[RMDB]
Structure probing data (DMS and 2A3) for a 177-nucleotide construct.
RNA sequence: GGGAACGACUCGAGUAGAGUCGAAAAUAUAUCCUACGGGAAUCCACUGGAACCUCUGAUGUCCAGUCCCUCCCCGGUUCUACUGAAGGGGGACUCCGGGACGCCUUGCAAGCUGGGGACGAAGCCGCGAUUUGUUAUUGUUCGCAAUAACAAAUCGAAAAGAAACAACAACAACAAC
Reactivity to DMS in 0.01 (KOAc 150mM, MgCl2 10mM, bicine 150mM(pH8.5), 24C), signal-to-noise 2, nucleotides 027 to 126: u010a180u000a080u000c030c000u000a120c090g020g000g000a100a100u010c100c080a100c050u000g040g000a080a090c070c100u000c130u000g000a120u020g000u000c020c030a100g000u000c020c010c020u000c010c020c030c010g010g020u010u000c160u000a110c070u020g010a030a060g000g020g020g000g000a050c040u000c090c070g080g000g000a140c080g010c030c030u000u000g010c100a020a120g010c050u000g020g000g000g000a090c030g010a070a050g020c120c050g010
Reactivity to 2A3 in 0.01 (KOAc 150mM, MgCl2 10mM, bicine 150mM(pH8.5), 24C), signal-to-noise 1, nucleotides 027 to 126: u080a000u010a000u050c000c000u020a020c060g000g020g040a020a070u080c070c060a090c040u020g030g020a050a090c080c090u060c110u210g180a210u190g000u010c000c000a010g010u000c000c010c000u030c090c000c000c010g080g010u090u010c090u190a180c040u040g090a000a020g060g030g000g000g010a000c000u000c050c090g080g040g020a050c050g080c030c010u060u100g010c040a020a020g000c000u030g000g050g000g010a010c040g040a000a020g030c050c010g010
DMS adducts were read by reverse transcription with MarathonRT.